Background: Chemical mapping of a 177-nucleotide RNA with DMS. For DMS the reverse transcriptase was MarathonRT. It was measured as part of the RMDB library M2PK50.

[RMDB]
RNA sequence: GGGAACGACUCGAGUAGAGUCGAAAACUCUGCUAAUUCGUUAGCAGAGGUACACUGGGACGGGUCGGCAGGGGGAUACUCGCGGUCCCAAGAAGAAUCCAGCAAGCACAUUAUUCGUAAUGUGCAAUGUGUACAUCCACUUCGGUGGAUGUACACAAAAAGAAACAACAACAACAAC
Reactivity to DMS in 0.01 (KOAc 150mM, MgCl2 10mM, bicine 150mM(pH8.5), 24C), signal-to-noise 1, nucleotides 027 to 126: c000u000c000u000g000c010u000a030a000u020u000c220g020u000u000a000g000c010a050g000a030g070g030u000a020c100a140c040u000g000g000g010a060c150g010g000g000u000c180g000g010c070a210g000g000g040g000g000a040u000a020c090u000c050g010c070g020g000u000c000c020c010a120a050g000a180a190g000a070a030u000c050c100a090g000c200a160a170g000c000a000c000a010u000u000a000u000u000c300g000u000a000a000u000g000u000g020c030a050a000